[RMDB]
RNA sequence: GGGAACGACUCGAGUAGAGUCGAAAAUGUGAAACUAUUAAUGAUGCUUUGCGCGGUGUUGCACUGCAGCAAGACGUGAACCAAAAAGAUGUCUUUUCGUCGGUUCGUAGGCUUGCUAAAGUAUCAAGAACUAGCCAUGAUUCGUCAUGGCUAGUUCAAAAGAAACAACAACAACAAC
Reactivity to DMS in 0.01 (KOAc 150mM, MgCl2 10mM, bicine 150mM(pH8.5), 24C), signal-to-noise 3, nucleotides 027 to 126: u020g020u010g020a090a110a170c120u000a090u000u000a110a180u000g010a030u000g010c010u010u000u010g030c170g030c010g000g000u000g010u020u010g000c050a010c010u010g020c040a100g010c000a010a000g010a010c010g000u010g000a000a010c000c020a040a060a020a070a090g010a220u000g020u010c120u000u000u000u000c090g000u000c180g010g010u000u000c000g020u010a140g010g000c000u000u000g010c010u000a010a010a010g010u000a010u000c000a080a110
Reactivity to 2A3 in 0.01 (KOAc 150mM, MgCl2 10mM, bicine 150mM(pH8.5), 24C), signal-to-noise 4, nucleotides 027 to 126: u250g080u030g050a070a080a060c090u070a090u250u080a140a130u120g010a000u000g010c000u010u020u080g030c100g000c020g020g000u040g020u150u280g110c070a000c010u000g000c010a000g020c010a000a000g010a000c020g100u150g010a000a020c000c000a000a020a080a030a090g060a080u140g190u220c010u050u100u050u060c110g110u030c060g010g000u000u000c010g010u040a090g000g050c010u010u000g000c010u020a000a000a000g010u010a010u020c020a010a030